[RMDB]
RNA sequence: GGGAACGACUCGAGUAGAGUCGAAAAGAAAAUAAGUGAUGGAUGGAAGCGUCAAACCAAACAUGGCAAUGACGCUAAAGAAUGGAGAACAGCUACUCCAUGGAAACAAAAGCUGUAAUAAAAAAAACACUAUUAGCUAGUUCGCUAGCUAAUAGUGAAAAGAAACAACAACAACAAC
Reactivity to 2A3 in 0.01 (KOAc 150mM, MgCl2 10mM, bicine 150mM(pH8.5), 24C), signal-to-noise 3, nucleotides 027 to 126: g030a000a060a020a050u190a070a000g050u040g100a070u090g070g060a010u050g060g070a110a010g000c000g000u010c020a070a090a160c030c010a080a150a090c120a170u120g000g000c000a010a080u060g000a010c000g000c000u010a010a000a000g040a020a000u010g000g010a010g010a080a010c000a010g000c020u030a010c000u000c000c000a000u090g090g060a050a060a010c020a020a050a000a000g010c010u020g030u050a040a100u120a070a020a010a000a000a000a010a000
Reactivity to DMS in 0.01 (KOAc 150mM, MgCl2 10mM, bicine 150mM(pH8.5), 24C), signal-to-noise 2, nucleotides 027 to 126: g010a070a130a150a060u000a060a060g020u000g000a090u000g000g030a070u000g020g010a140a080g000c000g000u010c000a030a270a160c020c020a040a120a150c220a150u000g000g010c030a080a170u000g010a020c020g010c000u000a030a060a090g000a120a030u000g000g000a000g010a080a070c000a020g000c000u000a060c000u010c000c000a020u000g010g000a130a070a040c070a020a050a060a100g000c010u000g010u000a110a040u020a010a030a000a110a020a080a110a170